RNA sequence: GGGAACGACUCGAGUAGAGUCGAAAAGGCUUGCCUGUCCAGCCGGGUUUGUCUGCGAUCGACACGCUCGUCGGUGUCAUCAAUGAUGCUCGGGUGCUGCUGGUGUUGGACCAUUGUGAGCAUUUGCCCGUUAUAUGUCUUUCGAGACAUAUAACGGAAAAGAAACAACAACAACAAC
Reactivity to 2A3 in 0.01 (KOAc 150mM, MgCl2 10mM, bicine 150mM(pH8.5), 24C), signal-to-noise 5, nucleotides 027 to 126: g040g010c010u040u070g030c000c020u020g030u020c000c010a020g040c010c010g000g040g020u080u170u200g060u000c020u020g010c040g040a060u060c140g000a010c010a000c030g120c030u140c120g280u150c080g160g020u010g020u010c010a010u010c010a030a060u070g010a010u040g010c010u020c010g020g000g040u050g030c020u060g010c010u030g020g060u080g090u190u140g040g030a020c030c020a100u060u160g060u040g060a040g030c030a070u050u090u180g060c010
Reactivity to DMS in 0.01 (KOAc 150mM, MgCl2 10mM, bicine 150mM(pH8.5), 24C), signal-to-noise 8, nucleotides 027 to 126: g010g010c030u010u000g020c020c090u000g010u000c060c020a140g010c030c010g010g000g000u000u010u010g030u000c010u000g010c300g000a030u000c090g020a020c010a030c020g010c040u010c200g010u000c040g020g030u000g000u000c010a080u000c040a050a270u000g000a030u000g000c020u000c020g000g000g010u000g000c070u000g010c060u010g010g020u000g010u000u000g010g010a070c050c100a110u010u000g010u000g000a050g010c030a130u000u000u010g010c170
Chemical mapping of a 177-nucleotide RNA with 2A3 and DMS. Reactivities are given for positions 27 through 126. The reactions ran in a buffer of 150 mM KOAc, 10 mM MgCl2 and 150 mM bicine (pH 8.5), at 24 C. For 2A3 the reverse transcriptase was SuperScript II with manganese.